Annotation:
An RNA of 207 nucleotides, treated with 2A3 and read out base by base. It was measured as part of the RMDB library OK3TST. For 2A3 the reverse transcriptase was SuperScript II with manganese. As a SHAPE reagent, 2A3 marks flexible, mostly unpaired nucleotides at the ribose 2'-OH. The reactions ran in a buffer of 150 mM KOAc, 10 mM MgCl2 and 150 mM bicine (pH 8.5), at 24 C.
RNA sequence: GGGAACGACUCGAGUAGAGUCGAAAAACAACAAGUUCAGGAACCCCACCGUGGCCCCCACCCACGAUGUGACCACGGAGCGGUCGCAGCGGCUGCAGCUGCGCUACGUGCCCGUGAUGCAGGAGGACGGGCAGUACACGUACAAAACCCGCUUCCAGUUUUACAUGCUUUUCGAAGCAUGUAAAACAAAAGAAACAACAACAACAAC
Reactivity to 2A3 in 0.01 (KOAc 150mM, MgCl2 10mM, bicine 150mM(pH8.5), 24C), signal-to-noise 2, nucleotides 027 to 156: a000c060a000a030c030a140a030g020u050u090c030a030g120g050a140a220c000c040c000c010a010c020c010g150u020g000g000c040c000c070c000c000a050c000c000c000a000c000g020a060u100g050u130g120a080c010c120a030c040g040g010a040g000c000g060g000u040c030g000c010a010g020c000g100g000c090u170g070c020a040g000c000u010g000c000g010c010u070a050c000g100u060g000c010c000c030g020u010g020a090u150g020c100a060g010g080a020g020g020a050c010g010g000g000c000a000g000u040a020c050a000c140g030u110a000c040a000a120a040a040c000c000c000g010c000u030u010c000c000a000